An RNA of 177 nucleotides, treated with 2A3 and DMS and read out base by base. Reactivities are given for positions 27 through 126. DMS adducts were read by reverse transcription with MarathonRT. It was measured as part of the RMDB library TTRDEL.

RNA sequence: GGGAACGACUCGAGUAGAGUCGAAAAGAUAUGGACCCUAUGUGGAGCCGGUCGGAAACGACCGUGCGUUGAAACAUGAGGGUCCUAAGUCAAAAGAACACAGGUAUGUUCGCAUACCUGUGUUCAAGCUGAAGUAACGGUUCGCCGUUACUUCAGCAAAAGAAACAACAACAACAAC
Reactivity to 2A3 in 0.01 (KOAc 150mM, MgCl2 10mM, bicine 150mM(pH8.5), 24C), signal-to-noise 1, nucleotides 027 to 126: g020a040u100a030u110g000g020a030c020c010c020u010a020u000g000u000g040g020a000g000c020c000g000g020u000c000g030g080a150a060a040c020g000a000c020c000g050u270g000c000g000u100u040g060a060a010a000c010a010u170g300a100g010g000g000u000c000c060u000a010a000g000u030c010a060a000a020a030g020a010a000c000a000c000a010g010g020u000a000u020g070u140u170c290g010c170a000u000a000c000c000u000g000u010g000u000u000c000a010a000
Reactivity to DMS in 0.01 (KOAc 150mM, MgCl2 10mM, bicine 150mM(pH8.5), 24C), signal-to-noise 1, nucleotides 027 to 126: g000a100u020a300u000g000g010a020c010c000c000u000a050u000g000u010g010g000a110g000c000c020g000g000u010c000g050g010a040a120a280c010g000a030c010c020g020u010g020c010g000u000u000g000a220a150a000c010a000u000g010a020g000g010g000u010c010c020u000a010a050g000u010c020a090a150a140a100g000a010a000c000a000c000a000g000g000u010a000u000g000u000u010c230g010c010a010u000a000c000c000u010g010u000g030u000u000c000a060a060